[RMDB]
This 177-nucleotide RNA was probed chemically with 2A3 and DMS.
DMS adducts were read by reverse transcription with MarathonRT.
The DMS profile rests on 8,029 reads.
RNA sequence: GGGAACGACUCGAGUAGAGUCGAAAACAACGAUAUCUCGCUGGUGAGCGAGGUGGGGUCUCUCGACGUGCCGGAACUUUUCCGGGUCGAAUCCUAUCCAACCGUCCACCAGAUGGUCAGCCGCGUACGUAAAUAUCGGUUUCGACCGAUAUUUACGAAAAGAAACAACAACAACAAC
Reactivity to 2A3 in 0.01 (KOAc 150mM, MgCl2 10mM, bicine 150mM(pH8.5), 24C), signal-to-noise 4, nucleotides 027 to 126: c030a030a030c030g030a010u030a050u140c070u050c060g030c020u030g010g050u040g020a050g010c010g000a050g000g010u020g010g010g000g000u020c030u010c010u010c110g000a000c040g090u210g110c010c010g000g040a060a100c110u160u170u260u020c010c000g000g010g000u000c000g000a000a010u030c000c000u040a060u080c020c000a040a090c060c010g040u030c010c000a010c000c000a030g020a080u110g020g000u050c040a030g040c030c020g060c040g060u080a090
Reactivity to DMS in 0.01 (KOAc 150mM, MgCl2 10mM, bicine 150mM(pH8.5), 24C), signal-to-noise 5, nucleotides 027 to 126: c090a100a130c070g000a090u000a040u000c050u000c050g010c000u000g000g010u000g000a060g010c000g010a080g000g010u010g000g000g000g010u000c180u010c110u000c000g010a010c020g010u010g010c000c000g010g000a010a170c300u010u010u000u000c000c010g010g000g000u000c010g010a030a060u010c010c010u000a030u020c000c030a070a120c230c010g010u000c010c010a030c010c010a030g010a090u000g010g000u000c080a070g000c040c030g000c090g000u000a120

About this RNA
The 2A3 profile rests on 8,277 reads.